Chemical mapping of a 177-nucleotide RNA with DMS and 2A3. Conditions: 150 mM KOAc, 10 mM MgCl2 and 150 mM bicine (pH 8.5), 24 C. The data come from the RNA Mapping Database (RMDB), library VIROID. Reactivities are given for positions 27 through 126. DMS adducts were read by reverse transcription with MarathonRT. 2A3 is a SHAPE reagent: it acylates the 2'-hydroxyl of flexible nucleotides of all four kinds. For 2A3, 10,806 sequencing reads were counted.
RNA sequence: GGGAACGACUCGAGUAGAGUCGAAAACGGGGCAACUCUUCUCAGAAUACAGCAAGAGGCGUGGAGAGAGGGCCGCGGUGCUCUGGAGUAGAGGCUCUGCCUUCGAAACACCAUCGAUCGUCCCUUCGUUGUUAUUACUGUUCGCAGUAAUAACAACAAAAGAAACAACAACAACAAC
Reactivity to DMS in 0.01 (KOAc 150mM, MgCl2 10mM, bicine 150mM(pH8.5), 24C), signal-to-noise 4, nucleotides 027 to 126: c090g010g010g000g020c070a100a100c030u010c020u000u000c010u000c050a100g010a110a100u010a090c140a090g020c110a110a080g000a080g020g010c080g010u000g000g000a120g000a100g000a030g000g000g020c060c030g010c030g010g000u000g000c020u000c000u000g000g010a050g010u000a060g000a020g010g020c010u000c210u010g010c010c010u000u010c000g010a120a090a110c010a010c160c000a030u010c010g000a160u010c030g000u000c000c000c000u000u000c130
Reactivity to 2A3 in 0.01 (KOAc 150mM, MgCl2 10mM, bicine 150mM(pH8.5), 24C), signal-to-noise 4, nucleotides 027 to 126: c020g000g020g020g020c030a050a120c050u000c020u140u040c030u020c020a020g090a090a110u230a130c070a040g040c040a150a060g040a060g270g040c080g060u090g050g050a090g000a010g010a020g030g020g010c010c010g000c020g010g000u010g000c010u000c000u020g020g010a010g010u010a010g010a000g010g000c030u050c130u300g040c010c010u140u110c010g000a010a010a010c020a020c130c000a010u000c010g030a180u040c020g020u010c000c000c010u020u040c060